[RMDB]
RNA sequence: GGGAACGACUCGAGUAGAGUCGAAAAAAUAAUCCCUUUGUUUUAUUGUCCUUUGAGUAUAAGCACUAAAUUGUUUAAUCCUUUUCAGGAGGAAAUGUUUGUCCUUGCAUUUCCUUCUGGUCCUUAUGGAUUAAAUCUAUUUCGAUAGAUUUAAUCCAAAAGAAACAACAACAACAAC
Reactivity to DMS in 0.01 (KOAc 150mM, MgCl2 10mM, bicine 150mM(pH8.5), 24C), signal-to-noise 2, nucleotides 027 to 126: a070a080u020a110a100u000c000c010c020u020u010u000g010u000u010u000u020a040u010u000g010u000c050c030u000u000u000g000a100g010u010a080u010a090a080g010c030a050c060u000a050a070a090u010u000g000u000u000u000a080a140u000c040c010u010u000u010u000c010a010g020g010a000g000g020a010a010a000u000g000u000u010u010g020u000c050c060u000u000g000c000a010u000u000u000c000c000u000u000c020u010g010g010u010c040c030u000u010a110u010
Reactivity to 2A3 in 0.01 (KOAc 150mM, MgCl2 10mM, bicine 150mM(pH8.5), 24C), signal-to-noise 6, nucleotides 027 to 126: a000a000u270a030a090u060c010c000c000u010u040u010g040u020u020u020u020a080u040u060g050u040c020c020u050u060u150g050a040g050u090a060u040a250a010g020c020a000c060u110a070a140a140u050u020g040u050u070u060a050a080u050c020c000u060u080u120u130c000a010g000g000a000g010g010a000a000a010u020g010u030u090u120g120u040c040c050u020u030g010c010a000u000u000u000c000c000u000u000c010u000g000g010u000c010c000u100u100a090u080